[RMDB]
RNA sequence: GGGAACGACUCGAGUAGAGUCGAAAAGGGGACCUGAUGCCUGAGCGAUUCCAAUACUGGCCUUGAGAUCCCACUGGGAGAUGGUGAAGAGGAAAUUGGACGUCCAACAAGGACUCACUAAUGGAAAGGUCUAAUUACAUUUCGAUGUAAUUAGACCAAAAGAAACAACAACAACAAC
Reactivity to 2A3 in 0.01 (KOAc 150mM, MgCl2 10mM, bicine 150mM(pH8.5), 24C), signal-to-noise 6, nucleotides 027 to 126: g010g000g000g010a030c010c020u040g030a060u100g030c010c030u020g030a020g020c030g070a130u100u040c020c000a020a000u050a110c050u060g060g010c000c010u060u070g060a050g010a080u060c000c010c030a050c070u060g020g040g000a100g020a070u050g000g060u080g020a070a040g040a030g050g050a070a060a050u060u040g040g020a040c050g020u000c010c000a040a040c060a140a170g020g010a020c000u020c030a100c040u100a090a080u110g090g010a130a060a030
Reactivity to DMS in 0.01 (KOAc 150mM, MgCl2 10mM, bicine 150mM(pH8.5), 24C), signal-to-noise 8, nucleotides 027 to 126: g010g010g000g000a110c040c020u000g010a130u010g010c060c020u010g010a080g010c080g000a120u000u010c050c020a060a090u000a080c120u000g010g010c050c040u000u000g000a100g000a120u000c010c010c020a120c140u010g010g010g010a070g010a070u000g010g000u000g010a070a100g010a080g000g010a040a080a100u000u010g000g010a090c170g000u000c010c020a080a100c200a100a110g000g000a070c020u010c060a070c060u000a060a060u010g000g010a080a060a130